Conditions: 150 mM KOAc, 10 mM MgCl2 and 150 mM bicine (pH 8.5), 24 C. Structure probing data (2A3 and DMS) for a 177-nucleotide construct. 2A3 is a SHAPE reagent: it acylates the 2'-hydroxyl of flexible nucleotides of all four kinds. DMS adducts were read by reverse transcription with MarathonRT. The DMS profile rests on 2,680 reads. The data come from the RNA Mapping Database (RMDB), library OK1LIB. The 2A3 profile rests on 1,906 reads.

RNA sequence: GGGAACGACUCGAGUAGAGUCGAAAAUCAAGGAGACGAUCGCCUAUGCGCAACGUGGCCACUCCUGGCGCAAACGACCGGCCACCGGUUGGGAAUCGCUUACUCCGACCGAGAUUGACGUCGUGCGCAGAGCUGAGCUAUUCGUAGCUCAGCUCUGAAAAGAAACAACAACAACAAC
Reactivity to 2A3 in 0.01 (KOAc 150mM, MgCl2 10mM, bicine 150mM(pH8.5), 24C), signal-to-noise 3, nucleotides 027 to 126: u090c060a040a020g010g000a020g000a010c050g010a020u050c040g000c040c030u280a190u280g090c190g000c090a030a060c070g020u010g010g000c000c000a100c020u000c010c040u040g080g000c010g010c030a160a060a050c000g010a030c010c040g000g010c000c000a000c000c020g040g010u000u020g090g010g020a030a080u130c120g010c150u060u170a110c090u060c020c000g030a010c000c020g010a010g010a060u000u050g040a020c000g000u000c000g030u000g000c000g000
Reactivity to DMS in 0.01 (KOAc 150mM, MgCl2 10mM, bicine 150mM(pH8.5), 24C), signal-to-noise 2, nucleotides 027 to 126: u030c080a160a130g000g030a000g040a110c050g000a000u000c020g020c010c020u000a190u020g010c260g000c070a080a050c230g020u000g000g020c000c010a300c040u020c000c020u020g000g000c040g000c000a000a110a160c030g020a000c020c120g050g000c010c000a020c020c000g000g000u000u000g000g020g000a070a120u010c020g000c300u060u030a060c140u010c020c010g020a020c040c000g000a090g020a010u000u030g000a210c210g010u000c010g000u010g000c020g030